[RMDB]
RNA sequence: GGGAACGACUCGAGUAGAGUCGAAAAACACUGGUUUCUGUUAUGUUCCUCUGAAGAGUUUGAAUUGGUUCUAAUUAGUAAUAAACUUGCUGAGUGAUCACCAUGAAGUCAUGAAAGUUUACUUUCAUACUUUGUUAGGACAGAUUAGUGGAAAACAUAAAUUAAUGCGGUUCGCCGCAUUAAUUUAAAAAGAAACAACAACAACAAC
Reactivity to DMS in 0.01 (KOAc 150mM, MgCl2 10mM, bicine 150mM(pH8.5), 24C), signal-to-noise 2, nucleotides 027 to 156: a090c060a080c070u010g010g000u000u000u000c010u020g010u010u000a170u000g010u010u000c010c020u000c030u010g020a110a080g000a110g020u010u020u000g000a070a070u000u000g020g010u000u000c040u000a040a080u000u000a090g010u000a080a110u000a060a040a070c050u000u000g030c050u000g020a200g010u000g010a070u000c020a060c070c130a100u020g010a090a080g020u000c100a010u000g000a030a010a030g010u000u000u010a040c070u000u000u010c020a130u000a020c010u000u000u000g020u000u010a090g010g000a040c010a060g010a110u000u010a070g030u010g010g010a060a060a060a050c040a160
Reactivity to 2A3 in 0.01 (KOAc 150mM, MgCl2 10mM, bicine 150mM(pH8.5), 24C), signal-to-noise 2, nucleotides 027 to 156: a010c030a030c040u050g040g030u050u100u020c040u060g030u060u030a060u120g030u040u010c020c000u000c010u050g110a130a100g070a070g110u030u100u100g080a100a080u070u080g070g000u110u050c040u080a190a050u130u050a080g040u060a010a060u040a190a090a040c000u010u090g020c030u030g020a030g060u120g020a020u120c020a020c090c010a000u080g010a010a020g050u090c040a010u030g000a020a020a000g000u020u130u130a160c020u030u010u000c000a000u010a000c000u040u010u030g030u070u090a030g020g030a020c000a000g060a070u020u060a030g040u040g000g060a080a110a010a000c070a040
Chemical mapping of a 207-nucleotide RNA with DMS and 2A3. Reactivities are rounded to 0.1 and cut off at 0 and 3. For DMS, 4,296 sequencing reads were counted. 2A3 adducts were read by reverse transcription with SuperScript II with manganese. The data come from the RNA Mapping Database (RMDB), library OK3TST.